RNA sequence: GGGAACGACUCGAGUAGAGUCGAAAAACAACAGAUAGCUGGAACCAGCGUAGAAUUCUACGCAUAUCCAUAGCGAAUGGUACCUGUAAAGAAAAUAAUGAGCAAUGUACAAGUACCAACAGUGCUCAAUGCCAUGGUGAUGUCAAUCACAUAUGCACGAUAAUCAGCCUUUCGAGGCUGAUUAUCGAAAAGAAACAACAACAACAAC
Reactivity to 2A3 in 0.01 (KOAc 150mM, MgCl2 10mM, bicine 150mM(pH8.5), 24C), signal-to-noise 2, nucleotides 027 to 156: a000c040a000a000c020a020g100a070u150a060g000c000u010g030g020a080a110c060c020a030g010c010g000u000a000g070a140a280u300u080c000u000a000c000g030c010a030u060a050u110c030c000a040u110a050g040c000g010a050a060u020g000g000u020a010c010c000u010g000u090a100a090a020g140a070a090a070a040u280a050a100u080g030a000g010c010a010a070u070g030u040a040c070a160a000g010u000a020c010c010a000a040c030a040g070u000g010c000u010c000a020a090u110g000c040c020a020u100g030g020u020g000a000u030g080u230c090a090a020u000c000a010c010a050u130a010u080g020c000a000
This 207-nucleotide RNA was probed chemically with 2A3. The reactions ran in a buffer of 150 mM KOAc, 10 mM MgCl2 and 150 mM bicine (pH 8.5), at 24 C. Source: RMDB library OK3TST, as collected in RNAgym. The 2A3 profile rests on 923 reads. 2A3 adducts were read by reverse transcription with SuperScript II with manganese.